[RMDB]
RNA sequence: GGGAACGACUCGAGUAGAGUCGAAAAACAUGAGGGCUUGGUGGGCUUGCCAUUGAUGUGAUGAAUUCCAUCCUGGGAAGCUUUUACAAACCAGGCCCUCCCACAAGCACUGUGACUAUGAAGAUGAAUAGAAUGAGGUUUCCACUUUCUAGGCACAAUUAUUUAGUGAGUUCGCUCACUAAAUAAUAAAAGAAACAACAACAACAAC
Reactivity to DMS in 0.01 (KOAc 150mM, MgCl2 10mM, bicine 150mM(pH8.5), 24C), signal-to-noise 3, nucleotides 027 to 156: a070c050a100u010g000a040g040g030g040c020u000u000g010g000u000g020g010g010c000u000u000g000c010c010a040u000u010g010a040u010g020u010g020a040u010g030a180a250u000u000c010c000a020u000c010c210u010g040g010g000a050a020g010c000u000u000u000u010a220c130a110a110a090c010c010a020g040g020c020c000c000u000c000c000c010a060c050a040a140g020c120a080c100u000g030u010g010a050c020u000a030u010g010a020a040g020a050u010g000a040a060u000a100g000a060a160u000g020a130g020g010u000u000u000c040c020a050c030u000u000u000c040u000a020g010g000c020a020c030a090
Reactivity to 2A3 in 0.01 (KOAc 150mM, MgCl2 10mM, bicine 150mM(pH8.5), 24C), signal-to-noise 6, nucleotides 027 to 156: a000c080a110u160g010a020g000g000g010c010u010u000g010g000u020g010g030g010c020u000u030g140c000c010a040u060u180g010a010u010g180u090g040a060u090g110a110a240u230u030c000c000a000u000c000c030u000g020g000g030a000a000g000c000u060u060u050u110a120c120a060a140a020c000c000a000g010g000c000c000c000u000c000c000c000a050c000a030a050g080c080a010c150u050g000u010g030a020c010u010a020u150g020a010a040g050a100u080g040a070a070u090a170g090a090a140u170g060a120g220g010u050u060u020c040c010a030c000u050u090u030c020u020a000g040g000c020a000c000a020

Chemical mapping of a 207-nucleotide RNA with DMS and 2A3. Conditions: 150 mM KOAc, 10 mM MgCl2 and 150 mM bicine (pH 8.5), 24 C. DMS adducts were read by reverse transcription with MarathonRT. Source: RMDB library OK3TST, as collected in RNAgym. The DMS profile rests on 6,014 reads. The 2A3 profile rests on 5,069 reads.